Structure probing data (2A3 and DMS) for a 177-nucleotide construct.
The RNA was probed in 150 mM KOAc, 10 mM MgCl2 and 150 mM bicine (pH 8.5) at 24 C.
Reactivities are given for positions 27 through 126.
The data come from the RNA Mapping Database (RMDB), library OK2TST.
DMS (dimethyl sulfate) methylates the pairing face of unpaired adenines and cytosines.
For 2A3 the reverse transcriptase was SuperScript II with manganese.
[RMDB]
RNA sequence: GGGAACGACUCGAGUAGAGUCGAAAAAAUAUCGUACUCUCCGUGCUAACACCACACCGCUCUGUGUCUGCUGUGGUGCAUGAAUUUCGCAGGGCCAUAGGGGAAUUGGGAAAAGAAUGAAUUCCUAUACCUUUUAAUAUUUCGAUAUUAAAAGGUAAAAAGAAACAACAACAACAAC
Reactivity to 2A3 in 0.01 (KOAc 150mM, MgCl2 10mM, bicine 150mM(pH8.5), 24C), signal-to-noise 4, nucleotides 027 to 126: a000a000u190a040u010c020g020u050a040c010u000c010u020c050c000g020u020g040c010u060a080a010c000a030c020c000a010c000a010c020c030g080c050u050c050u150g110u040g050u130c040u060g060c010u030g040u050g100g030u040g010c020a050u090g040a140a080u050u110u130c030g000c040a010g040g010g000c030c030a070u150a080g010g010g010g040a020a060u100u070g030g020g030a020a100a040a040g080a030a070u140g020a040a080u040u000c000c010u040a100
Reactivity to DMS in 0.01 (KOAc 150mM, MgCl2 10mM, bicine 150mM(pH8.5), 24C), signal-to-noise 6, nucleotides 027 to 126: a090a060u000a070u010c040g010u010a100c070u000c020u000c040c040g020u010g010c050u010a160a110c060a050c120c010a040c030a050c120c120g000c020u010c120u000g010u000g010u010c060u000g020c070u010g020u010g010g020u010g010c040a040u010g020a090a120u010u010u000c040g010c060a050g000g000g010c040c080a080u000a080g010g000g000g000a050a070u000u000g010g010g010a030a040a080a120g010a130a080u010g010a120a180u000u000c010c010u000a190